Structure probing data (DMS and 2A3) for a 177-nucleotide construct.

RNA sequence: GGGAACGACUCGAGUAGAGUCGAAAAAGCGGGCCUUGAGAAUUUAACAGUACGUAAAGUAUACGGACAAGAUCGAAUACGGUAUCUGCGCUGUCAUAGCUGUGGAGCAGAGUUCAGUGAACGCAAGAGUAUCAGGUAACUUCGGUUACCUGAUACUAAAAGAAACAACAACAACAAC
Reactivity to DMS in 0.01 (KOAc 150mM, MgCl2 10mM, bicine 150mM(pH8.5), 24C), signal-to-noise 5, nucleotides 027 to 126: a080g030c040g010g010g020c040c010u000u000g010a120g010a090a070u000u000u010a070a090c070a090g020u000a030c030g020u010a030a080a120g000u010a170u000a060c030g020g010a070c070a090a100g010a100u000c050g010a090a060u010a050c080g020g010u010a040u010c040u000g010c050g000c000u000g020u010c100a070u010a060g020c060u000g030u000g000g010a060g020c040a060g010a110g000u000u010c030a090g010u000g000a040a040c070g010c160a050a130g010
Reactivity to 2A3 in 0.01 (KOAc 150mM, MgCl2 10mM, bicine 150mM(pH8.5), 24C), signal-to-noise 3, nucleotides 027 to 126: a000g030c030g000g000g030c010c010u040u070g050a030g030a120a060u110u160u190a140a040c070a080g040u050a000c020g040u060a090a000a060g090u080a070u020a140c050g010g030a020c060a120a030g020a090u080c030g030a060a010u070a120c030g030g050u090a090u060c040u070g010c020g000c000u020g090u100c030a060u110a100g040c080u050g050u080g070g070a040g000c020a000g010a000g060u070u040c010a030g010u030g110a050a000c050g000c070a040a060g020
Notes:
The reactions ran in a buffer of 150 mM KOAc, 10 mM MgCl2 and 150 mM bicine (pH 8.5), at 24 C. For DMS the reverse transcriptase was MarathonRT. As a SHAPE reagent, 2A3 marks flexible, mostly unpaired nucleotides at the ribose 2'-OH. For 2A3, 1,843 sequencing reads were counted.